[RMDB]
RNA sequence: GGGAACGACUCGAGUAGAGUCGAAAACAUAGCCGUACCAUGCUUCGUCGAAGUGAAUGCGAUCGCUGGUUUUUGCCAGCAGAUCCUGCGCCUCUUUGGCGUUAUAGCAUACGCCGUCAUAGGUACACCAUCCGACGACCUUCGGGUCGUCGGAUGGAAAAGAAACAACAACAACAAC
Reactivity to 2A3 in 0.01 (KOAc 150mM, MgCl2 10mM, bicine 150mM(pH8.5), 24C), signal-to-noise 2, nucleotides 027 to 126: c040a000u140a040g110c040c040g000u010a070c060c000a030u070g010c060u020u070c010g000u000c040g030a070a040g040u040g080a170a040u040g040c070g020a000u010c000g000c010u000g080g100u080u030u040u160u300g000c000c020a000g000c010a030g000a000u030c040c030u060g000c030g030c000c010u130c050u060u010u100g000g000c000g000u000u130a140u070a090g000c030a010u040a080c050g040c020c130g100u090c030a040u040a090g000g110u000a000c040a000
Structure probing data (2A3) for a 177-nucleotide construct. It was measured as part of the RMDB library OK1LIB. Conditions: 150 mM KOAc, 10 mM MgCl2 and 150 mM bicine (pH 8.5), 24 C.